[RMDB]
RNA sequence: GGGAACGACUCGAGUAGAGUCGAAAAAUAGAUUAUGAUAACAUCUGUAUAGCCAAUCAUAUAGAUUAUGAGAAAUGGAAUAAUCAUCAAAGAUUGGAGUCUACUGGUCCAGUGUUCAAGGUGAUGGUGUCAGAGAAAGGUUCGCCUUUCUCUGACAAAAAGAAACAACAACAACAAC
Reactivity to DMS in 0.01 (KOAc 150mM, MgCl2 10mM, bicine 150mM(pH8.5), 24C), signal-to-noise 2, nucleotides 027 to 126: a100u030a030g000a020u000u000a030u030g000a170u010a130a170c080a080u000c000u000g010u070a050u000a110g000c010c010a020a020u000c020a020u020a080u000a100g020a010u020u010a010u000g000a060g020a060a050a080u040g000g000a290a040u010a010a010u000c000a050u000c210a060a190a090g000a020u000u000g000g010a050g000u000c120u020a060c100u000g020g010u000c030c040a040g000u020g000u010u020c120a070a110g000g050u000g010a060u010g020g020
Reactivity to 2A3 in 0.01 (KOAc 150mM, MgCl2 10mM, bicine 150mM(pH8.5), 24C), signal-to-noise 2, nucleotides 027 to 126: a000u180a030g000a040u090u120a050u300g140a140u200a300a090c050a070u000c000u000g060u130a110u080a030g140c000c000a000a000u000c000a000u060a060u050a230g000a000u030u090a000u080g050a020g070a170a160a100u180g070g100a020a000u000a000a000u060c050a010u010c010a040a000a170g000a000u000u000g000g010a000g170u000c020u080a080c080u060g150g000u120c000c000a010g000u000g130u090u010c190a280a060g090g040u030g030a150u070g030g060